[RMDB]
RNA sequence: GGGAACGACUCGAGUAGAGUCGAAAAAUACAUACUGACACCGGUUGCUCAACAGGCUGUGUGGGACAAUAGAAUAACAAGGCUGUCAAUUUGAGGUUGACGGCUGCAAACCGAAUGGAGUGAAAUCGUAACCGGACUCACUUCGGUGAGUCCGGAACAGUUAGUUUGGUUUCGACCAAACUAACUGAAAAGAAACAACAACAACAAC
Reactivity to 2A3 in 0.01 (KOAc 150mM, MgCl2 10mM, bicine 150mM(pH8.5), 24C), signal-to-noise 1, nucleotides 027 to 156: a000u120a020c050a020u150a020c030u090g010a030c020a050c080c000g080g000u080u060g000c020u050c100a090a090c080a160g060g000c020u030g010u030g020u090g090g040g010a040c060a050a120u180a100g140a030a100u120a100a080c050a130a000g020g000c000u010g000u000c000a000a020u100u070u200g100a070g090g090u010u020g000a000c010g000g010c000u040g000c010a110a000a000c000c040g030a060a110u140g040g030a050g050u100g060a060a010a040u140c100g000u090a040a020c000c040g010g000a030c000u000c000a010c000u010u020c100g000g000u010g000a000g000u000c000c000g000g000a010a010
Reactivity to DMS in 0.01 (KOAc 150mM, MgCl2 10mM, bicine 150mM(pH8.5), 24C), signal-to-noise 1, nucleotides 027 to 156: a160u020a080c070a130u000a150c030u000g020a110c060a090c050c080g030g000u010u000g000c070u060c040a080a100c050a060g000g030c030u040g010u010g100u030g000g040g020a070c030a110a080u000a130g020a110a090u020a060a120c120a050a200g000g000c010u000g000u000c010a030a020u000u010u000g010a130g080g020u000u000g010a020c000g000g010c010u010g000c030a060a090a110c050c020g000a090a080u000g000g010a190g020u020g010a000a050a080u000c050g010u010a050a100c050c230g020g010a010c000u000c000a000c040u000u000c300g060g040u000g000a040g020u000c040c000g000g000a000a050
This 207-nucleotide RNA was probed chemically with 2A3 and DMS. Values cover nucleotides 27 to 156. It was measured as part of the RMDB library M2RFPK. The reactions ran in a buffer of 150 mM KOAc, 10 mM MgCl2 and 150 mM bicine (pH 8.5), at 24 C. The 2A3 profile rests on 706 reads. The DMS profile rests on 1,688 reads.